[RMDB]
RNA sequence: GGGAACGACUCGAGUAGAGUCGAAAAAUUACGGGCGGCGCAGGUGGAGCUGCGAUCCCUCGGCCCAUCGCGUGCUCUCUCGGUGGCCCAGACGCUGCAAACGGACAGGCGGGCCACCUGCAACGAAGUCUCAUCCUUUAUUCGUAAAGGAUGAGACAAAAGAAACAACAACAACAAC
Reactivity to 2A3 in 0.01 (KOAc 150mM, MgCl2 10mM, bicine 150mM(pH8.5), 24C), signal-to-noise 3, nucleotides 027 to 126: a020u180u140a100c140g000g000g020c070g020g000c010g000c040a080g000g030u040g020g040a170g010c000u000g000c030g080a110u070c010c010c010u000c010g000g000c000c000c010a000u020c010g000c010g020u020g010c010u000c010u000c020u010c070g000g000u000g000g000c020c000c010a070g020a090c160g040c120u020g000c050a160a230a130c080g060g070a080c010a010g010g020c010g000g000g000c000c000a000c000c000u000g020c010a020a040c010g080a100a000
Reactivity to DMS in 0.01 (KOAc 150mM, MgCl2 10mM, bicine 150mM(pH8.5), 24C), signal-to-noise 4, nucleotides 027 to 126: a070u000u020a090c130g020g000g010c040g010g000c010g020c020a060g040g030u000g010g010a140g020c010u000g010c100g010a100u000c070c090c020u000c040g010g000c010c000c000a030u000c010g000c050g020u000g000c020u000c040u000c060u010c080g030g000u000g010g010c000c000c000a140g020a110c100g000c000u000g000c050a100a090a130c300g010g000a130c020a050g010g010c060g010g000g000c010c000a010c010c000u010g010c130a060a070c110g000a070a140